[RMDB]
RNA sequence: GGGAACGACUCGAGUAGAGUCGAAAAGGCCAUCGUUUUUCCCAGACCAUUUUCGAUGGCCAUAGGUCUGGAUUAUAGUUCAAUCGCCGAGAGGCGUACAGUUAGAGUAGCGAGCUCGAAGCACGCGACCGUUACGAGCUCGCGAAGGUCGCGGAGAACUAGGGAGUAAUUUCGAUUACUCCCUAGUAAAAGAAACAACAACAACAAC
Reactivity to DMS in 0.01 (KOAc 150mM, MgCl2 10mM, bicine 150mM(pH8.5), 24C), signal-to-noise 2, nucleotides 027 to 156: g010g000c010c010a030u010c010g000u000u000u000u000u000c020c050c000a300g000a060c070c020a150u000u000u020u000c070g010a000u010g020g060c000c000a010u000a030g030g010u000c020u000g050g010a210u000u010a100u000a110g010u000u000c150a030a140u010c050g010c000c000g030a300g000a200g010g000c010g010u000a040c060a140g040u000u010a080g020a120g010u000a230g010c020g010a050g020c040u020c010g000a100a190g020c050a120c060g020c070g000a030c030c000g000u000u000a090c010g020a090g010c020u000c030g010c000g010a000a090g020g010u010c010g030c050g040g000a200g010a050
Reactivity to 2A3 in 0.01 (KOAc 150mM, MgCl2 10mM, bicine 150mM(pH8.5), 24C), signal-to-noise 2, nucleotides 027 to 156: g000g000c010c000a000u010c020g060u010u030u050u160u080c020c000c000a020g000a040c020c030a130u060u090u120u140c010g000a000u000g000g000c000c000a010u030a020g010g000u000c030u040g060g020a080u100u100a110u200a200g040u010u070c050a090a060u090c030g000c020c050g060a080g020a000g020g030c030g010u010a000c000a030g010u100u150a030g040a060g070u060a030g010c000g010a000g000c000u000c000g030a070a020g070c010a020c100g100c070g060a140c110c040g000u000u050a040c010g010a010g000c010u000c000g010c000g010a010a000g050g000u020c030g000c120g040g020a060g000a070